About this RNA
Structure probing data (DMS and 2A3) for a 177-nucleotide construct. For DMS the reverse transcriptase was MarathonRT. DMS (dimethyl sulfate) methylates the pairing face of unpaired adenines and cytosines. For 2A3 the reverse transcriptase was SuperScript II with manganese. The RNA was probed in 150 mM KOAc, 10 mM MgCl2 and 150 mM bicine (pH 8.5) at 24 C. Reactivities are given for positions 27 through 126.

RNA sequence: GGGAACGACUCGAGUAGAGUCGAAAAACGGUGGCAUACGUGCCACCGACUUUCCUGCCCUCGAGGAGCUCACAGUCUAGUAUGUCUCAGCCCUACUAGACUGAGGCUCCUUGAGGGCAGGGAUCAAAUAUGAUUAGCUGUUCGCAGCUAAUCAUAUAAAAGAAACAACAACAACAAC
Reactivity to DMS in 0.01 (KOAc 150mM, MgCl2 10mM, bicine 150mM(pH8.5), 24C), signal-to-noise 6, nucleotides 027 to 126: a130c010g010g010u000g000g020c010a040u000a080c220g030u000g020c000c000a000c010c000g000a020c040u000u000u000c000c000u000g000c000c000c000u000c000g010a010g010g010a020g000c000u020c050a170c000a000g010u010c000u010a010g000u000a010u000g000u010c090u040c190a130g000c200c060c050u000a010c000u010a000g010a010c000u000g000a200g000g000c000u000c000c000u000u000g000a000g010g000g010c000a000g000g000g000a010u020c120a070a090
Reactivity to 2A3 in 0.01 (KOAc 150mM, MgCl2 10mM, bicine 150mM(pH8.5), 24C), signal-to-noise 8, nucleotides 027 to 126: a000c010g010g000u000g000g010c010a020u020a080c230g100u030g000c000c000a000c000c000g000a000c000u010u030u030c000c000u000g000c000c000c000u000c000g010a000g000g000a000g000c010u080c080a300c000a020g000u000c000u000a000g000u000a030u100g060u040c050u070c300a090g020c010c000c000u000a000c000u000a000g000a000c000u000g000a000g000g000c000u000c000c000u000u000g000a000g000g000g000c000a000g000g000g000a000u070c010a000a170